[RMDB]
RNA sequence: GGGAACGACUCGAGUAGAGUCGAAAAAUGCCUAUCGGGAAAUGGCCGCUAAGGCUGCGCCAUUGUUUAAAGAGUUUGGCGCGCUUCGUAUUGUCGAAUGCUGGGCCAGCGAUGUACCGGAUGGCAACUACCGGAUGUGUUUCGACACAUCCGGUAGAAAAGAAACAACAACAACAAC
Reactivity to 2A3 in 0.01 (KOAc 150mM, MgCl2 10mM, bicine 150mM(pH8.5), 24C), signal-to-noise 2, nucleotides 027 to 126: a000u040g000c000c000u070a170u210c030g000g000g080a020a040a080u030g060g010c020c000g000c070u070a100a070g030g000c060u080g020c010g020c000c000a030u020u070g210u120u220u280a130a170a040g170a080g060u010u080u060g000g000c000g000c020g000c000u020u000c020g030u060a160u280u270g150u160c030g010a110a050u120g010c040u110g030g030g000c060c000a000g000c050g090a040u130g000u050a030c000c010g030g010a030u050g010g000c000a030a040
Reactivity to DMS in 0.01 (KOAc 150mM, MgCl2 10mM, bicine 150mM(pH8.5), 24C), signal-to-noise 2, nucleotides 027 to 126: a100u000g000c000c010u010a230u000c030g010g000g000a080a120a110u000g000g000c030c000g010c040u030a090a120g010g020c000u020g030c030g010c010c000a000u000u000g000u010u010u010a120a150a120g020a150g010u000u000u000g000g010c020g000c010g000c050u000u010c010g000u000a130u010u030g000u000c040g010a040a060u020g030c050u000g010g020g000c000c000a040g010c140g000a090u000g030u000a210c000c000g000g000a090u010g000g000c010a050a150
Conditions: 150 mM KOAc, 10 mM MgCl2 and 150 mM bicine (pH 8.5), 24 C. Chemical mapping of a 177-nucleotide RNA with 2A3 and DMS. Values cover nucleotides 27 to 126. The data come from the RNA Mapping Database (RMDB), library OK2TST.